[RMDB]
RNA sequence: GGGAACGACUCGAGUAGAGUCGAAAAAUACUGUAAGCCAAUAAAACAUAACGCCAAAUACAAUAAAUGCUGAACGAUGUACUUUCUAUGUGAUAUUUUGGCGUUAUUUUGAUUUACCAUUGCACAUCGUUCAUGUUAACAGGCUAUACGGUUAUAAGCCUAUUUAUCCCUUCGGGGAUAAAUAGGCAAAAGAAACAACAACAACAAC
Reactivity to 2A3 in 0.01 (KOAc 150mM, MgCl2 10mM, bicine 150mM(pH8.5), 24C), signal-to-noise 1, nucleotides 027 to 156: a000u080a000c030u000g000u000a000a000g000c000c000a080a050u240a060a170a020a020c020a160u020a020a020c000g050c060c020a170a000a000u110a050c090a110a110u170a150a020a130u210g010c060u020g090a000a020c000g020a020u000g130u090a060c000u060u300u140c110u140a110u090g050u060g100a130u000a270u280u120u140u000g000g000c000g000u000u000a000u000u010u000u100g020a020u000u060u030a080c060c020a000u060u270g140c090a000c000a000u020c000g000u000u000c000a000u030g000u020u030a060a080c000a020g000g020c080u070a030u000a170c000g000g020u060u000a080u030a300a000